About this RNA: An RNA of 177 nucleotides, treated with 2A3 and DMS and read out base by base. The RNA was probed in 150 mM KOAc, 10 mM MgCl2 and 150 mM bicine (pH 8.5) at 24 C. DMS adducts were read by reverse transcription with MarathonRT. The 2A3 profile rests on 7,232 reads.
[RMDB]
RNA sequence: GGGAACGACUCGAGUAGAGUCGAAAAGAUAUGGAACAGCUUUUGACGCGAAGCCAGUCGGAAACGACUGGGUUCGCGAUAAGCUGCUUCCUAAGUCACUAUCCCGACACGUUCGCGUGUCGGGAAACUACUGGAAGUAGUUCGCUACUUCCAGUAGAAAAGAAACAACAACAACAAC
Reactivity to 2A3 in 0.01 (KOAc 150mM, MgCl2 10mM, bicine 150mM(pH8.5), 24C), signal-to-noise 4, nucleotides 027 to 126: g010a020u070a030u160g000g010a010a000c000a010g010c000u130u090u160u290g300a150c070g000c000g010a020a020g300c000c000a010g040u010c010g030g090a090a080a090c030g000a010c020u000g030g010g000u010u000c010g030c010g000a000u000a000a000g000c000u010g000c080u010u000c010c000u020a110a020g050u030c010a030c140u180a160u100c000c000c000g000a000c010a000c000g060u080u120c300g000c010g130u000g000u000c000g000g010g030a020a000a000
Reactivity to DMS in 0.01 (KOAc 150mM, MgCl2 10mM, bicine 150mM(pH8.5), 24C), signal-to-noise 3, nucleotides 027 to 126: g010a040u010a300u010g000g000a040a080c000a010g000c000u010u010u010u000g010a230c170g010c030g000a010a010g000c000c000a010g020u020c000g010g000a070a070a200c010g030a020c000u000g020g000g010u000u000c000g020c010g010a030u000a000a020g000c000u000g000c300u000u000c000c000u000a030a100g000u010c030a150c130u000a140u000c000c000c000g000a000c000a000c010g020u010u000c190g020c010g070u000g010u000c000g010g000g000a000a010a070